Conditions: 150 mM KOAc, 10 mM MgCl2 and 150 mM bicine (pH 8.5), 24 C. An RNA of 177 nucleotides, treated with DMS and read out base by base. High DMS reactivity at an A or C suggests that its Watson-Crick edge is free.
RNA sequence: GGGAACGACUCGAGUAGAGUCGAAAAGAUAUGGAUAAGCGAGGGAUACACUUGGACCUCGGAAACGAGCUAGUGUAGUCCUACCCACCGCUUAUCCUAAGUCAAAACGUGGGCUUCGGCCCACGAACAUGCUGGAGUUGUUCGCAACUCCAGCAUGAAAAGAAACAACAACAACAAC
Reactivity to DMS in 0.01 (KOAc 150mM, MgCl2 10mM, bicine 150mM(pH8.5), 24C), signal-to-noise 1, nucleotides 027 to 126: g010a050u040a300u000g000g000a030u000a010a010g020c010g000a130g040g010g000a100u010a000c020a000c000u000u020g100g020a130c300c040u010c000g000g000a010a110a180c010g000a010g010c020u000a020g000u000g030u020a000g000u000c020c000u010a060c050c010c060a300c080c020g000c020u010u000a000u000c000c010u020a020a050g000u000c040a030a000a060a150c050g000u000g000g000g000c020u000u000c170g070g000c000c000c000a000c020g000a030a090